[RMDB]
RNA sequence: GGGAACGACUCGAGUAGAGUCGAAAACUCUUCUGCUUCGGCAGAAGAGAAAAUAACGCUGGCGUGGGACACAGCCGGAGCUAGCCUCUGAUAGUCUCAGUAAAAUCGGAUAGUUCGCUAUCCGAAAGAUAUCUCUGAGGUUCGCCUCAGAGAUAUCAAAAGAAACAACAACAACAAC
Reactivity to DMS in 0.01 (KOAc 150mM, MgCl2 10mM, bicine 150mM(pH8.5), 24C), signal-to-noise 2, nucleotides 027 to 126: c010u000c000u000u000c010u010g010c000u000u010c180g040g020c010a010g010a010a000g000a000g000a000a040a050a080u020a100a150c170g000c020u000g000g000c090g020u000g010g000g030a060c040a080c060a070g000c000c040g010g000a060g000c020u010a090g000c110c010u000c010u000g000a180u000a060g000u000c030u000c020a070g000u000a070a060a080a130u000c000g010g020a010u000a000g010u000u020c250g020c000u000a000u000c000c000g000a000a030a050
Reactivity to 2A3 in 0.01 (KOAc 150mM, MgCl2 10mM, bicine 150mM(pH8.5), 24C), signal-to-noise 3, nucleotides 027 to 126: c000u000c000u000u000c000u000g010c000u040u060c180g130g000c010a020g020a000a000g000a000g000a010a000a010a000u040a030a030c080g020c050u020g030g000c100g140u010g020g050g000a020c000a020c020a070g050c050c030g020g000a010g020c060u110a030g010c030c000u000c010u030g020a030u030a110g020u020c010u020c060a040g070u160a020a110a060a150u030c000g000g000a000u000a020g030u050u050c180g000c110u000a000u010c000c000g010a000a000a000